[RMDB]
RNA sequence: GGGAACGACUCGAGUAGAGUCGAAAAUUCUAAGGCGCUUGAGAGAACUCGGGAGAAGGAACUCGGCAAAUUGGUACCGUAACUUCGGGAUAAGGUACGCCCUUGUAGUUUGACUGGCUCGCGCCAGGUGCGUUUUGAAAUUCGUUUCAAAACGCACAAAAGAAACAACAACAACAAC
Reactivity to DMS in 0.01 (KOAc 150mM, MgCl2 10mM, bicine 150mM(pH8.5), 24C), signal-to-noise 1, nucleotides 027 to 126: u030u000c010u040a000a120g010g030c220g050c020u010u000g010a140g050a210g000a240a090c030u010c060g000g050g010a130g000a050a010g010g010a140a050c090u000c100g040g010c060a090a140a140u000u010g010g000u000a060c010c000g000u000a100a250c020u000u000c070g060g010g050a160u010a030a110g000g000u010a050c040g010c050c010c000u030u000g000u010a030g010u000u010u000g000a220c050u020g000g000c020u000c120g010c150g000c020c030a030g020
Chemical mapping of a 177-nucleotide RNA with DMS. The reactions ran in a buffer of 150 mM KOAc, 10 mM MgCl2 and 150 mM bicine (pH 8.5), at 24 C. Reactivities are rounded to 0.1 and cut off at 0 and 3. It was measured as part of the RMDB library OK2TRN. For DMS, 697 sequencing reads were counted.